Source: RMDB library OK1LIB, as collected in RNAgym. This 177-nucleotide RNA was probed chemically with 2A3 and DMS. For DMS the reverse transcriptase was MarathonRT. Conditions: 150 mM KOAc, 10 mM MgCl2 and 150 mM bicine (pH 8.5), 24 C. The DMS profile rests on 1,849 reads.
[RMDB]
RNA sequence: GGGAACGACUCGAGUAGAGUCGAAAAAGAGACGGGGUUUCGCCAUGUUGGUCAGGCUGGUCUCGAACUCCGGACUUCAGGGGAUCCGCCCACUUCGGCUUCCCAAAGUGCUGGGAUGACAGGUGUGGGACUGAUAAUCCUUCGGGAUUAUCAGUCCAAAAGAAACAACAACAACAAC
Reactivity to 2A3 in 0.01 (KOAc 150mM, MgCl2 10mM, bicine 150mM(pH8.5), 24C), signal-to-noise 2, nucleotides 027 to 126: a000g090a000g000a030c080g000g000g090g000u000u070u080c030g020c010c000a100u300g030u100u120g100g130u090c060a040g040g000c010u030g020g010u020c040u020c080g010a030a030c020u000c010c000g070g130a130c000u050u090c100a060g000g000g040g060a100u010c050c000g050c020c020c000a010c000u050u120c080g030g000c000u000u060c000c000c000a060a080a060g210u270g010c100u070g000g000g040a040u040g050a080c060a040g000g130u050g020u120g070
Reactivity to DMS in 0.01 (KOAc 150mM, MgCl2 10mM, bicine 150mM(pH8.5), 24C), signal-to-noise 1, nucleotides 027 to 126: a050g000a070g010a080c080g000g000g000g010u000u000u000c270g090c030c030a010u010g000u030u000g020g010u050c160a090g000g030c030u000g000g000u030c040u000c160g010a090a020c040u000c000c000g010g000a060c130u040u020c010a050g030g000g000g000a070u000c070c020g000c010c020c060a020c080u000u020c060g020g020c050u000u000c000c010c010a040a050a120g020u000g000c170u010g000g000g000a030u000g000a090c020a080g000g000u000g000u010g000